[RMDB]
This 207-nucleotide RNA was probed chemically with 2A3. It was measured as part of the RMDB library VIROID.

RNA sequence: GGGAACGACUCGAGUAGAGUCGAAAAAGGUUCUGACGCGACCGGUGGCACGCCGAGUCGCUCACUGCCUCAACCUCCUUUUCCUCUAUCUAGCUUGGUCUCCGGGCGAGGGUGUUUAGCCCUUGGAACCGCAGUUGGUUCCUCGGAACUAAACUCGGAUGUUGUUUGUCUUCGGACAAACAACAUCAAAAGAAACAACAACAACAAC
Reactivity to 2A3 in 0.01 (KOAc 150mM, MgCl2 10mM, bicine 150mM(pH8.5), 24C), signal-to-noise 1, nucleotides 027 to 156: a000g060g000u040u000c020u050g000a000c090g000c020g000a000c000c000g030g000u070g120g270c220a050c300g010c020c020g020a120g000u020c000g030c010u000c020a020c030u080g010c010c010u090c040a120a150c000c020u110c000c000u000u050u020u110c030c000u030c040u100a140u180c080u090a050g010c010u050u100g040g020u030c060u000c060c010g030g000g070c060g000a060g020g050g000u050g000u000u010u040a000g000c000c000c010u000u020g010g000a000a010c000c000g030c070a250g030u300u300g010g000u000u000c000c000u000c000g050g000a010a020c000u010a030a000a000c000u060c080g060